RNA sequence: GGGAACGACUCGAGUAGAGUCGAAAAGAAAGAAGGCGUAAUCGCCGUGUACGAGCUCCACGAUCAAUGAUUUUCUCGCCUGGCGGCAUUGAUCGGACGUACCUCGGAUUGCCGCCUUACAAAGUUAAUACUAGAUUAAAUAAACCGUCUAGGCAAACUACGUGGUCGUAUUCGUACGACCACGUAGAAAAGAAACAACAACAACAAC
Reactivity to 2A3 in 0.01 (KOAc 150mM, MgCl2 10mM, bicine 150mM(pH8.5), 24C), signal-to-noise 2, nucleotides 027 to 156: g080a010a070a030g140a040a010g010g010c010g030u050a010a050u080c090g010c090c050g030u000g010u020a020c000g010a030g070c080u060c100c060a070c020g000a000u010c000a000a000u020g050a070u000u020u230u190c170u260c050g000c000c080u000g000g000c000g030g000c000a000u000u010g000a000u000c030g010g010a050c020g010u010a000c000c020u070c050g000g000a000u030u070g040c060c020g000c000c000u000u000a070c070a000a070a010g010u040u070a070a040u060a110c050u020a000g070a220u130u190a080a180a180u170a110a010a060c060c000g000u000c070u120a010g010g000c000a020a000a040